[RMDB]
RNA sequence: GGGAACGACUCGAGUAGAGUCGAAAAGCAAAGAGCUUAUGCAUCGCACCGAGGCGAUCUGUGCAGCCAUGAUUGAAGCAUGGGGAUAUACUGAACUCUUGCAAGAAAUCCGCAAAUUUUAUUUGUGUGUGGUUUUUGGUUUCGACCAAAAACCACAAAAAGAAACAACAACAACAAC
Reactivity to 2A3 in 0.01 (KOAc 150mM, MgCl2 10mM, bicine 150mM(pH8.5), 24C), signal-to-noise 1, nucleotides 027 to 126: g030c010a000a070a080g010a030g000c020u000u100a010u110g010c000a010u020c060g040c010a060c110c200g030a000g050g250c060g000a060u020c020u060g030u040g000c010a030g080c040c020a000u090g010a160u010u150g040a070a000g140c000a000u070g000g030g000g100a020u040a000u010a300c020u020g010a020a020c000u040c000u060u000g030c000a000a020g050a090a020a000u020c010c000g000c080a000a010a000u150u270u210u080a180u000u120u080g040u000g020